[RMDB]
An RNA of 177 nucleotides, treated with 2A3 and read out base by base. 2A3 adducts were read by reverse transcription with SuperScript II with manganese. The data come from the RNA Mapping Database (RMDB), library OK1LIB. Conditions: 150 mM KOAc, 10 mM MgCl2 and 150 mM bicine (pH 8.5), 24 C.

RNA sequence: GGGAACGACUCGAGUAGAGUCGAAAAAUGGUUGCCUGGAAGUCCACGUUGUCGAACAGCGCGUCGAUCUCAAUCGUCGCCUGUGCCGCGGACGACAGCGUGCGCUUGGCGCGCUCCCAGGCGGUGCCUGACGCCGCCCAUUCGUGGGCGGCGUCAGAAAAGAAACAACAACAACAAC
Reactivity to 2A3 in 0.01 (KOAc 150mM, MgCl2 10mM, bicine 150mM(pH8.5), 24C), signal-to-noise 1, nucleotides 027 to 126: a000u240g020g000u020u140g000c000c010u100g000g040a000a030g040u060c000c000a000c000g000u010u000g070u000c010g140a190a000c030a000g000c000g010c010g300u000c060g000a070u000c070u030c180a110a000u000c020g070u020c000g000c000c120u030g000u000g030c000c130g100c040g130g000a000c000g000a000c010a000g000c030g030u020g000c040g040c020u040u120g160g000c100g000c030g000c010u020c000c000c000a030g000g000c000g090g000u040g000c050